[RMDB]
RNA sequence: GGGAACGACUCGAGUAGAGUCGAAAAAGGCUGCUUCCCUGAUAAUUGCGCUGUGUUUCCGUAUGAAAUACAGGCAACCGACACUCUGCGCCUCUUUGAGCUGACGAUAACCGUGAGGUUGGCGACGGCUAACUCCGGUGUUCGCACCGGAGUUAGCAAAAGAAACAACAACAACAAC
Reactivity to DMS in 0.01 (KOAc 150mM, MgCl2 10mM, bicine 150mM(pH8.5), 24C), signal-to-noise 2, nucleotides 027 to 126: a000g010g010c050u020g000c050u000u000c000c040c010u000g000a140u070a060a130u000u000g000c010g000c000u010g010u010g000u000u000u000c010c300g010u110a090u090g010a010a020a010u010a020c020a070g010g000c030a000a000c110c080g040a070c160a060c070u030c020u000g000c070g000c010c030u000c010u000u000u020g030a100g020c000u000g000a050c070g010a040u000a040a090c070c020g020u010g000a170g000g010u000u020g000g060c030g050a120c200g000
Reactivity to 2A3 in 0.01 (KOAc 150mM, MgCl2 10mM, bicine 150mM(pH8.5), 24C), signal-to-noise 3, nucleotides 027 to 126: a000g080g000c040u030g000c000u040u010c010c000c000u060g100a110u070a210a090u070u040g000c300g040c010u000g000u000g020u010u010u010c050c090g130u210a120u300g000a000a010a000u010a000c010a000g020g000c000a000a020c040c000g070a020c020a020c050u050c010u040g000c010g010c000c000u050c000u090u070u060g040a040g010c020u060g050a050c050g060a090u020a100a040c010c020g040u090g030a040g060g000u020u000g010g000c010g020a100c050g030